Annotation: Structure probing data (2A3 and DMS) for a 177-nucleotide construct.
RNA sequence: GGGAACGACUCGAGUAGAGUCGAAAAUGCGAUAAACGGCACCUAUAAGGUGGUGCCGAACCAGCGUGACCUACCAACACGCAACGAGCAGUCUGGUAUGACUCCAAACCUAUGGUAAACAAAAGAACUCACAUCAUACUUUCGAGUAUGAUGUGAGAAAAGAAACAACAACAACAAC
Reactivity to 2A3 in 0.01 (KOAc 150mM, MgCl2 10mM, bicine 150mM(pH8.5), 24C), signal-to-noise 5, nucleotides 027 to 126: u060g010c020g060a070u130a060a110a060c000g000g030c000a010c000c010u090a110u060a300a150g260g050u110g000g000u000g000c040c000g010a000a010c020c030a010g000c010g010u010g040a100c000c020u020a050c010c010a030a020c000a000c010g000c000a010a050c060g010a020g040c050a010g060u000c020u060g040g100u200a120u190g050a040c040u000c020c010a050a110a100c030c010u060a090u100g020g040u080a110a070a000c050a030a070a010a020g070a040a030
Reactivity to DMS in 0.01 (KOAc 150mM, MgCl2 10mM, bicine 150mM(pH8.5), 24C), signal-to-noise 4, nucleotides 027 to 126: u000g020c060g010a100u010a050a130a140c000g000g000c010a000c000c010u000a130u010a170a100g020g020u010g020g020u010g010c010c030g020a020a030c150c080a180g000c000g020u000g000a050c010c020u000a020c010c030a200a090c030a000c010g010c020a130a090c200g010a130g040c070a050g030u000c040u000g010g020u000a040u000g000a060c060u010c030c030a040a100a130c060c020u000a050u000g020g020u020a050a050a130c200a020a060a080a080g010a080a140
The DMS profile rests on 2,803 reads. It was measured as part of the RMDB library M2PK90. The reactions ran in a buffer of 150 mM KOAc, 10 mM MgCl2 and 150 mM bicine (pH 8.5), at 24 C. For 2A3, 5,437 sequencing reads were counted. For 2A3 the reverse transcriptase was SuperScript II with manganese.